Chemical mapping of a 177-nucleotide RNA with DMS.
The RNA was probed in 150 mM KOAc, 10 mM MgCl2 and 150 mM bicine (pH 8.5) at 24 C.
[RMDB]
RNA sequence: GGGAACGACUCGAGUAGAGUCGAAAACGAGGCUCCGGACGAAGCGAUCGAGCGAAGCGAGUGAGCCCGAGGUCCCUAGAAAAACCCCUAGGCAGGCGCCAUCGCGCCCGUACCGCAAACCGACACAGCUGUACUCUUGAUUCGUCAAGAGUACAGCAAAAGAAACAACAACAACAAC
Reactivity to DMS in 0.01 (KOAc 150mM, MgCl2 10mM, bicine 150mM(pH8.5), 24C), signal-to-noise 2, nucleotides 027 to 126: c030g000a180g080g010c000u000c000c000g000g020a260c070g000a090a300g000c040g000a070u020c190g070a220g000c020g000a070a300g020c010g000a300g000u010g030a090g010c000c000c000g010a130g020g000u000c010c010c090u010a020g000a140a060a030a060a070c000c010c010c040u000a050g030g010c120a060g000g040c080g030c000c150a090u020c100g000c000g030c000c000c040g020u000a130c120c100g030c050a010a080a030c030c020g000a090c060a050c160a060